Background: Structure probing data (2A3 and DMS) for a 177-nucleotide construct. The reactions ran in a buffer of 150 mM KOAc, 10 mM MgCl2 and 150 mM bicine (pH 8.5), at 24 C.

[RMDB]
RNA sequence: GGGAACGACUCGAGUAGAGUCGAAAACGCAGGGAUAUAACGAUGCGAUAAUCGCACCGCAGCUUGCAAGGCUUCAUCCAUGAUCCAUACGCCGUGGUGCUUCUCUAACGCCGGAGUCAAUCCACGCGGUACAGAAGGAUUUCGAUCCUUCUGUACCAAAAGAAACAACAACAACAAC
Reactivity to 2A3 in 0.01 (KOAc 150mM, MgCl2 10mM, bicine 150mM(pH8.5), 24C), signal-to-noise 5, nucleotides 027 to 126: c030g000c020a030g070g050g050a060u060a020u040a290a070c070g030a050u060g020c000g020a020u150a080a080u160c030g000c010a000c000c010g050c010a000g000c020u050u140g050c060a080a100g030g000c060u040u070c040a070u030c080c020a110u160g020a010u030c030c020a050u030a120c050g020c020c010g010u020g010g010u030g000c000u030u010c020u010c000u020a130a070c040g070c130c030g110g010a020g020u030c010a020a030u000c010c010a060c040g060c070
Reactivity to DMS in 0.01 (KOAc 150mM, MgCl2 10mM, bicine 150mM(pH8.5), 24C), signal-to-noise 3, nucleotides 027 to 126: c110g010c050a060g030g000g000a170u020a110u030a090a170c090g010a120u000g000c030g000a140u000a100a090u000c130g030c000a030c010c010g000c070a040g000c040u010u000g050c110a110a080g000g000c060u010u010c070a060u000c130c100a090u000g010a050u000c040c020a070u000a110c140g010c040c030g080u000g020g010u000g000c030u000u020c030u000c030u030a060a130c060g000c060c080g010g000a080g020u010c080a060a190u000c020c010a060c120g000c190